[RMDB]
RNA sequence: GGGAACGACUCGAGUAGAGUCGAAAAACCAUCCUUUUACAGUAUUUUUUCAAUAUUGUAAAACUUCUCAUUUACUUUGUGUCUUUAUGAUCUCAUCGUUCUGGUGGACCAUAAUCAGACGCACGGUUGAUUUGAGUGCAUUCGUGCACUCAAAUCAAAAAGAAACAACAACAACAAC
Reactivity to 2A3 in 0.01 (KOAc 150mM, MgCl2 10mM, bicine 150mM(pH8.5), 24C), signal-to-noise 3, nucleotides 027 to 126: a000c020c010a060u160c020c020u000u020u000u000a010c000a000g020u010a000u010u030u020u030u040u220c030a000a000u010a000u000u000g000u000a010a000a010a020c030u210u090c030u040c090a180u100u180u190a030c000u020u020u010g010u000g000u010c000u000u000u000a000u000g030a030u000c300u020c050a030u000c010g270u300u070c120u280g000g010u010g000g000a000c000c010a000u010a020a020u110c060a000g000a010c010g000c010a020c040g010g010u000
This 177-nucleotide RNA was probed chemically with 2A3.
For 2A3, 1,340 sequencing reads were counted.
The data come from the RNA Mapping Database (RMDB), library RFM100.